[RMDB]
RNA sequence: GGGAACGACUCGAGUAGAGUCGAAAAACAUAUUACGAUAUGAUUCAGAUGGUGUCUUACUGGUUCGUACCAAGGGACAUAAUGGUUUCUUGUUUCCAACCAAAGACCAAGUGGCGAGCCUGAAUAAAAAACUGACUGCCGUUCGCGGCAGUCAGAAGGAUAAAUUAAACUUCGGUUUAAUUUAUCCAAAAGAAACAACAACAACAAC
Reactivity to 2A3 in 0.01 (KOAc 150mM, MgCl2 10mM, bicine 150mM(pH8.5), 24C), signal-to-noise 2, nucleotides 027 to 156: a000c010a040u200a070u120u180a100c100g050a020u030a000u110g100a050u020u090c080a070g050a100u080g060g050u070g050u090c030u020u090a150c060u080g010g000u000u040c010g000u020a010c000c040a000a000g000g000g010a010c050a040u240a120a150u170g120g010u010u000u000c030u000u010g000u040u030u010c010c020a010a000c000c000a020a170a000g000a000c000c010a030a070g020u060g060g040c060g040a020g020c000c000u040g030a020a010u120a010a090a010a000a000a010c000u010g010a000c000u000g000c010c000g020u050u080c260g000c000g080g000c000a000g000u000c000a010g000a000a000